An RNA of 177 nucleotides, treated with DMS and read out base by base.
The DMS profile rests on 859 reads.
Reactivities are given for positions 27 through 126.
Source: RMDB library M2PK90, as collected in RNAgym.
RNA sequence: GGGAACGACUCGAGUAGAGUCGAAAAGACACGAGUUCCCGGAACAGACUCUCUCAACCGCCAAGUUUUGAAGGGACAAAAGUCCAAGUGCGCCUCAGCACAAAAGGCGGAACAAAACAAAUGCAAAUUGGUAUUCUGUAUUCGUACAGAAUACCAAAAAAGAAACAACAACAACAAC
Reactivity to DMS in 0.01 (KOAc 150mM, MgCl2 10mM, bicine 150mM(pH8.5), 24C), signal-to-noise 2, nucleotides 027 to 126: g010a080c070a080c060g010a190g000u000u010c010c000c000g030g000a090a040c140a160g030a050c030u000c050u000c010u040c090a100a090c100c010g010c000c040a100a120g030u010u000u050u010g020a120a140g000g000g000a020c050a080a120a070a090g010u000c010c030a110a130g020u020g000c070g000c080c040u000c140a120g000c000a040c040a000a020a080a050g010g000c010g060g000a070a050c090a040a080a040a040c240a030a030a050u000g010c110a020a110a190